An RNA of 177 nucleotides, treated with 2A3 and DMS and read out base by base. The 2A3 profile rests on 5,096 reads. 2A3 is a SHAPE reagent: it acylates the 2'-hydroxyl of flexible nucleotides of all four kinds. It was measured as part of the RMDB library OK2TST.

RNA sequence: GGGAACGACUCGAGUAGAGUCGAAAAGCGUCAAGAGCAGCAACCGUACCGUACUAAGAAAUUUGACUUGAGAGUUCAUGCCGUUCUGUACUUCAUCAGGCCCACUGGACAUGGUUUAAAGCCAAUAACUACCUAUCACUUUCGAGUGAUAGGUAGUAAAAGAAACAACAACAACAAC
Reactivity to 2A3 in 0.01 (KOAc 150mM, MgCl2 10mM, bicine 150mM(pH8.5), 24C), signal-to-noise 5, nucleotides 027 to 126: g030c010g050u030c060a070a020g010a020g070c020a010g030c010a000a050c020c010g030u040a040c020c010g060u040a040c030u070a080a090g110a130a150a080u200u130u130g050a040c010u080u060g060a090g000a020g130u000u110c040a050u110g040c020c000g030u050u010c030u030g040u040a070c010u060u070c010a090u010c010a040g060g010c020c000c020a030c010u050g000g050a010c010a140u090g020g020u030u100u120a050a120a000g010c010c000a030a010u130a090
Reactivity to DMS in 0.01 (KOAc 150mM, MgCl2 10mM, bicine 150mM(pH8.5), 24C), signal-to-noise 5, nucleotides 027 to 126: g010c080g020u010c060a080a070g010a080g020c040a070g010c040a060a080c100c050g020u000a070c080c040g020u000a050c060u000a080a100g010a060a090a100u000u000u010g010a070c030u000u000g000a110g010a140g020u000u010c030a070u000g010c030c030g020u000u000c040u000g010u010a040c050u010u000c050a040u000c070a070g000g000c030c020c020a110c090u000g010g000a100c120a090u010g010g020u000u000u000a040a080a130g010c020c020a070a100u010a090